[RMDB]
RNA sequence: GGGAACGACUCGAGUAGAGUCGAAAAAGUCAUGGACACGCCGACAGGAACACGCAGGGUCGGGGCAGCAUAAACGAGCCGGUUGCGGUCAUCGGAGUGGGCUGUCGAUUUCCGGGAGAUAUUGACGGUCCUCCAUCCAGUUCGCUGGAUGGAGGACAAAAGAAACAACAACAACAAC
Reactivity to DMS in 0.01 (KOAc 150mM, MgCl2 10mM, bicine 150mM(pH8.5), 24C), signal-to-noise 1, nucleotides 027 to 126: a090g010u020c040a080u000g000g000a240c100a110c050g010c010c010g000a020c130a100g020g000a090a030c170a010c090g020c110a120g010g010g010u030c030g000g010g010g010c040a050g000c060a020u000a030a050a090c140g020a090g010c020c020g010g000u010u000g010c020g040g000u010c060a140u000c030g020g020a120g010u060g000g020g000c010u000g010u000c020g000a150u000u000u010c010c020g010g000g000a120g000a040u000a030u000u000g000a050c170g020